[RMDB]
The data come from the RNA Mapping Database (RMDB), library RFMREP. An RNA of 177 nucleotides, treated with DMS and 2A3 and read out base by base. For DMS, 3,870 sequencing reads were counted. DMS adducts were read by reverse transcription with MarathonRT. For 2A3 the reverse transcriptase was SuperScript II with manganese. Conditions: 150 mM KOAc, 10 mM MgCl2 and 150 mM bicine (pH 8.5), 24 C.
RNA sequence: GGGAACGACUCGAGUAGAGUCGAAAAUCCCAGUGACAGGGCCUAUUCAUAGCGAGUGUGAACGGUCAAUCCGGCCAACUAAAGCUUUCAUAAUGGUCAUAAGGCGGCUGACCAACGGUCUCCACUGCGAUUUAGAUAUCUUCGGAUAUCUAAAUCGAAAAGAAACAACAACAACAAC
Reactivity to DMS in 0.01 (KOAc 150mM, MgCl2 10mM, bicine 150mM(pH8.5), 24C), signal-to-noise 5, nucleotides 027 to 126: u000c000c000c000a110g010u000g010a070c130a080g000g010g000c030c010u000a130u010u000c060a080u000a070g010c070g000a080g020u000g010u000g000a050a080c300g000g020u000c060a080a100u010c070c050g030g000c030c030a060a110c120u010a050a100a180g010c060u000u000u010c120a090u000a110a090u010g000g010u000c050a100u000a100a130g020g000c060g000g020c270u000g000a060c030c020a060a090c110g010g000u000c020u000c050c020a040c110u010g010
Reactivity to 2A3 in 0.01 (KOAc 150mM, MgCl2 10mM, bicine 150mM(pH8.5), 24C), signal-to-noise 4, nucleotides 027 to 126: u010c000c000c000a000g050u060g020a060c070a080g040g010g000c010c020u110a090u080u070c050a050u060a060g040c060g070a120g130u080g010u010g060a070a020c050g000g010u010c030a000a050u060c040c040g090g000c000c030a010a020c040u120a140a060a010g040c020u000u120u040c030a060u110a250a100u150g020g000u010c020a040u060a170a060g050g020c030g020g010c020u030g010a020c000c010a040a020c040g020g020u000c010u020c050c000a030c030u050g010